[RMDB]
RNA sequence: GGGAACGACUCGAGUAGAGUCGAAAACAAACAACAUGCCAAGCAGUAGGGAAGAAGAGAAAGUGUCGGUACCUGCAGAAGAAGCGCCGGCUAACAACGUAACAGCAGACGCAGCAAGGCAUGAAAACCUCGAGGUGGUAUUCGUACCACCUCGAGGAAAAGAAACAACAACAACAAC
Reactivity to 2A3 in 0.01 (KOAc 150mM, MgCl2 10mM, bicine 150mM(pH8.5), 24C), signal-to-noise 1, nucleotides 027 to 126: c040a000a040a000c040a050a020c030a000u000g030c000c000a000a040g000c040a020g020u040a040g040g000g080a210a070g010a040a000g080a090g090a160a170a080g140u200g020u080c000g000g060u030a050c000c000u060g010c030a020g070a230a000g100a010a000g000c000g000c000c010g000g010c000u030a010a010c050a100a000c190g120u100a030a020c030a120g050c000a020g000a000c000g000c010a000g000c000a010a020g000g000c000a000u020g000a040a000a000a000